[RMDB]
RNA sequence: GGGAACGACUCGAGUAGAGUCGAAAACAAUCAACAAUAUGGUUUGUGUAGUUAUGCUGAAAAUCGUUGAGGUUGUAUGGAAUAGGUUAAGCGUAAGACCUUAAGUUGAAAAACUUUAAAAUUAAUCAAAAUCAUGUACACUUCGGUGUACAUGAAAUCACAUUUUGCAGUUCGCUGCAAAAUGUGAAAAAGAAACAACAACAACAAC
Reactivity to 2A3 in 0.01 (KOAc 150mM, MgCl2 10mM, bicine 150mM(pH8.5), 24C), signal-to-noise 1, nucleotides 027 to 156: c000a020a020u190c030a000a090c000a060a170u060a090u110g050g040u050u080u030g000u020g000u000a120g010u120u000a090u180g010c030u040g110a130a000a150a150u070c060g040u060u100g000a010g040g030u010u000g000u040a180u170g050g090a210a110u040a150g060g000u040u130a070a030g000c070g040u010a030a030g020a070c000c000u020u010a040a000g050u000u000g040a200a000a130a000a000c000u000u120u190a040a010a010a040u140u240a160a050u060c020a000a000a000a190u050c000a000u000g000u000a000c000a000c000u020u030c210g000g010u010g000u000a000c000a000u000g000a000a000a000